The record gives the reactivity of an RNA of 207 nucleotides to 2A3.
[RMDB]
RNA sequence: GGGAACGACUCGAGUAGAGUCGAAAAAUUAAAAGUUUCUGCUCCUUUAAUGUACCAGGGUGGCGUUCUAGCUUUAAAUAAGGGUUCUAACUUAUUUGUUCAAAAUGGGGACUUGUUUGGUCCCAUACCAUCAGGACCAUUAUACAUUGAUAACCAAGUUAAUGUCGGAAUUCGUUCCGACAUUAACAAAAGAAACAACAACAACAAC
Reactivity to 2A3 in 0.01 (KOAc 150mM, MgCl2 10mM, bicine 150mM(pH8.5), 24C), signal-to-noise 2, nucleotides 027 to 156: a010u160u190a000a100a000a000g000u000u050u030c040u000g060c030u100c010c020u060u150u100a080a000u060g070u070a030c060c000a030g100g000g020u070g020g000c010g020u010u060c030u050a050g010c000u010u120u190a010a080a030u050a030a030g080g000g070u140u110c080u130a040a000c010u050u010a030u100u070u050g060u110u120c060a030a070a060a140u120g010g000g020g020a010c010u040u060g050u170u090u080g000g000u010c010c000c000a010u020a010c010c000a020u070c010a000g080g000a000c000c000a000u060u040a080u020a110c080a030u030u080g100a040u220a040a030c080c050a060a060

Conditions: 150 mM KOAc, 10 mM MgCl2 and 150 mM bicine (pH 8.5), 24 C.